An RNA of 177 nucleotides, treated with 2A3 and DMS and read out base by base. Source: RMDB library OK2TST, as collected in RNAgym. Conditions: 150 mM KOAc, 10 mM MgCl2 and 150 mM bicine (pH 8.5), 24 C. As a SHAPE reagent, 2A3 marks flexible, mostly unpaired nucleotides at the ribose 2'-OH.

RNA sequence: GGGAACGACUCGAGUAGAGUCGAAAACGGAAGUUAGUAUCGAUCCGAGGAGUGGAACGGAUGCGAUUUCCCCUCCAUUCUAUCGAUAAGGUUGCUGGGAAACGCAUUAUAAGGGAUGAGUGAAGACUACCCCUACCGGAUUCGUCCGGUAGGGGUAAAAAGAAACAACAACAACAAC
Reactivity to 2A3 in 0.01 (KOAc 150mM, MgCl2 10mM, bicine 150mM(pH8.5), 24C), signal-to-noise 1, nucleotides 027 to 126: c000g000g040a020a030g080u190u140a040g060u050a050u070c060g000a030u040c050c020g010a040g050g040a080g050u080g020g040a080a000c090g010g020a020u040g000c000g040a300u020u020u000c000c010c000c000u030c020c010a040u050u080c020u070a160u150c100g080a110u030a120a060g070g020u160u080g100c160u120g020g000g000a000a020a000c030g010c010a010u010u040a140u040a070a030g000g020g000a030u030g050a020g050u000g050a070a080g060a020c030
Reactivity to DMS in 0.01 (KOAc 150mM, MgCl2 10mM, bicine 150mM(pH8.5), 24C), signal-to-noise 2, nucleotides 027 to 126: c040g020g030a060a110g020u000u010a070g010u000a070u000c030g000a090u000c040c050g010a090g000g000a050g000u000g020g020a070a130c140g010g010a040u000g020c020g000a140u000u010u000c000c010c020c040u010c010c000a130u000u000c060u000a140u050c140g010a070u000a080a040g010g000u010u010g000c110u010g000g000g020a030a010a050c010g000c020a030u000u010a080u010a100a100g000g010g000a070u010g000a030g010u000g000a080a060g010a100c110